This 207-nucleotide RNA was probed chemically with 2A3. Reactivities are given for positions 27 through 156. For 2A3 the reverse transcriptase was SuperScript II with manganese.

[RMDB]
RNA sequence: GGGAACGACUCGAGUAGAGUCGAAAAGAUUUAAACAGAUGGAGAUACACAAAUGUUUGAAUCCCAGUAACAAAAAUCCUGGUAUCUCGGGUAUACAGUAGUGCAGAUACUGUAUUUUUAAUGCUCCUUAGGUUUUCCAUCUUCGGAUGGAAAACAAUCAUUCUGACUAGUUCGCUAGUCAGAAUGAAAAAGAAACAACAACAACAAC
Reactivity to 2A3 in 0.01 (KOAc 150mM, MgCl2 10mM, bicine 150mM(pH8.5), 24C), signal-to-noise 1, nucleotides 027 to 156: g020a000u070u000u030a020a000a000c010a000g030a030u050g020g020a010g000a000u050a000c000a000c000a000a210a040u040g020u010u040u030g020a050a010u000c000c010c060a090g190u110a170a160c110a110a220a020a000a020u030c000c000u030g000g050u010a020u010c010u010c040g010g000g000u000a010u000a000c000a020g010u040a000g040u030g300c060a000g130a220u020a060c000u000g000u010a020u000u020u000u010u100a170a090u070g040c010u100c070c040u060u120a020g060g060u020u020u010u040c000c000a000u060c030u040u040c160g060g000a000u000g000g000a000a000a000a000c000a000a010